Chemical mapping of a 207-nucleotide RNA with DMS and 2A3. For DMS, 3,068 sequencing reads were counted. It was measured as part of the RMDB library M2RFPK. The reactions ran in a buffer of 150 mM KOAc, 10 mM MgCl2 and 150 mM bicine (pH 8.5), at 24 C. Values cover nucleotides 27 to 156. 2A3 adducts were read by reverse transcription with SuperScript II with manganese. For 2A3, 2,721 sequencing reads were counted.

[RMDB]
RNA sequence: GGGAACGACUCGAGUAGAGUCGAAAACAACACGUCCUCGUCGUACAGAGUGGUAACAUGUGUCACCACAUAUCCAAGCUUGGGUUCACGGGCUUGACCCAACCCCUUGGGCGGAUGGUGGCACAUGAAAAGAAGUAACACUUCGGUGUUACUUCAAUCAACUGUCAAUGUUCGCAUUGACAGUUGAAAAAGAAACAACAACAACAAC
Reactivity to DMS in 0.01 (KOAc 150mM, MgCl2 10mM, bicine 150mM(pH8.5), 24C), signal-to-noise 2, nucleotides 027 to 156: c030a050a090c080a150c060g040u010c010c020u000c050g010u000c070g080u000a080c080a070g000a230g010u000g010g020u010a100a170c020a050u010g020u000g020u000c020a040c000c000a000c010a190u010a060u000c010c040a050a100g000c040u000u000g000g000g050u000u000c090a180c060g060g040g080c050u000u000g010a160c020c000c010a080a060c010c050c010c010u020u000g000g010g000c090g020g000a090u000g000g010u000g000g030c040a020c010a000u020g010a040a100a110a220g020a030a020g030u010a010a010c000a020c010u000u000c280g050g020u010g020u000u000a000c000u000u000c000a020a140
Reactivity to 2A3 in 0.01 (KOAc 150mM, MgCl2 10mM, bicine 150mM(pH8.5), 24C), signal-to-noise 4, nucleotides 027 to 156: c090a020a010c030a010c070g130u070c030c020u050c040g160u070c020g060u200a100c050a100g060a030g050u130g020g070u160a140a000c010a000u000g000u000g000u010c000a000c030c000a020c020a070u180a050u030c000c010a010a010g050c100u130u110g030g030g010u090u080c130a090c280g020g010g020c040u130u300g130a300c010c000c000a000a020c000c020c000c000u000u000g000g000g000c030g110g000a130u020g000g010u000g000g000c000a000c000a000u000g000a000a000a000a020g000a000a000g000u000a000a000c010a010c010u040u080c250g070g000u000g000u000u000a000c000u000u000c000a000a010